[RMDB]
An RNA of 177 nucleotides, treated with DMS and 2A3 and read out base by base. The data come from the RNA Mapping Database (RMDB), library OK2TST. For DMS the reverse transcriptase was MarathonRT. For 2A3 the reverse transcriptase was SuperScript II with manganese. The reactions ran in a buffer of 150 mM KOAc, 10 mM MgCl2 and 150 mM bicine (pH 8.5), at 24 C.

RNA sequence: GGGAACGACUCGAGUAGAGUCGAAAAUUUGUAUACAACAAUGUAUUUCAACCUCUCUUUCAAAAAUCCAAGAGGAACCCAGAGGUCUACGUGGGUCAGGAGAGGGCCACCACAGGACCAGAGAUGGCCUUUCCUUCUUUUUCGAAAGAAGGAAAGGAAAAGAAACAACAACAACAAC
Reactivity to DMS in 0.01 (KOAc 150mM, MgCl2 10mM, bicine 150mM(pH8.5), 24C), signal-to-noise 2, nucleotides 027 to 126: u010u000u000g010u000a030u010a050c050a100a150c140a150a170u020g000u000a030u010u010u010c020a070a080c060c000u000c020u000c020u000u000u020c080a010a040a070a130a060u000c080c050a080a070g000a120g020g020a060a060c040c010c020a100g020a150g030g020u000c040u010a030c140g000u000g020g010g020u000c070a090g000g010a070g010a040g000g010g000c070c050a070c050c060a050c090a100g020g000a050c020c030a140g000a140g010a060u000g000g020
Reactivity to 2A3 in 0.01 (KOAc 150mM, MgCl2 10mM, bicine 150mM(pH8.5), 24C), signal-to-noise 3, nucleotides 027 to 126: u030u030u070g010u010a060u020a040c040a140a020c030a230a170u080g010u020a060u030u210u090c020a060a090c020c000u000c010u020c030u020u120u140c120a150a160a060a060a060u030c050c040a100a020g040a060g080g030a030a040c000c010c010a040g050a030g120g000u000c030u040a040c070g010u010g030g010g020u000c020a020g010g060a070g020a020g010g000g030c010c010a090c000c000a010c040a040g030g050a030c000c030a020g010a020g030a130u120g080g030